[RMDB]
An RNA of 170 nucleotides, treated with 2A3 and DMS and read out base by base. For 2A3, 5,241 sequencing reads were counted. For DMS the reverse transcriptase was MarathonRT. Conditions: 150 mM KOAc, 10 mM MgCl2 and 150 mM bicine (pH 8.5), 24 C. The data come from the RNA Mapping Database (RMDB), library 15KLIB.
RNA sequence: GGGAACGACUCGAGUAGAGUCGAAAAGAGAUCCCAUGCCGACCCGAAGAGGAAAGGAGGACACGGACGACAAACCGUAAGUUCUACUGCCCUUUAUUGUUGGGUGCACCCUGGGACCCAGUAAUACGAACGGUUGCCUUCGGGCAACCGAAAAGAAACAACAACAACAAC
Reactivity to 2A3 in 0.01 (KOAc 150mM, MgCl2 10mM, bicine 150mM(pH8.5), 24C), signal-to-noise 3, nucleotides 027 to 129: g160a020g020a100u010c010c000c000a030u040g020c020c040g080a120c000c000c000g000a020a030g000a010g000g000a020a030a000g050g010a010g000g000a000c020a000c000g000g030a040c040g010a040c070a050a090a000c000c000g010u040a070a050g020u010u000c000u050a100c000u050g040c050c000c000u050u070u060a070u040u070g120u070u070g000g000g010u010g050c020a070c010c010c010u010g000g050g000a000c000c000c020a000g030u090a030a060u030a110c050g030a130a000
Reactivity to DMS in 0.01 (KOAc 150mM, MgCl2 10mM, bicine 150mM(pH8.5), 24C), signal-to-noise 4, nucleotides 027 to 129: g000a160g000a170u030c030c010c010a100u040g020c040c060g040a090c060c000c070g050a080a070g000a060g000g040a000a000a000g030g010a000g030g000a000c050a040c010g000g060a130c100g040a090c300a090a110a080c090c000g030u010a020a130g020u020u040c010u000a110c000u040g020c230c000c060u050u000u000a080u010u050g020u050u010g020g020g020u000g000c170a070c060c030c000u010g050g000g080a040c020c060c080a060g000u040a070a010u040a100c210g040a080a110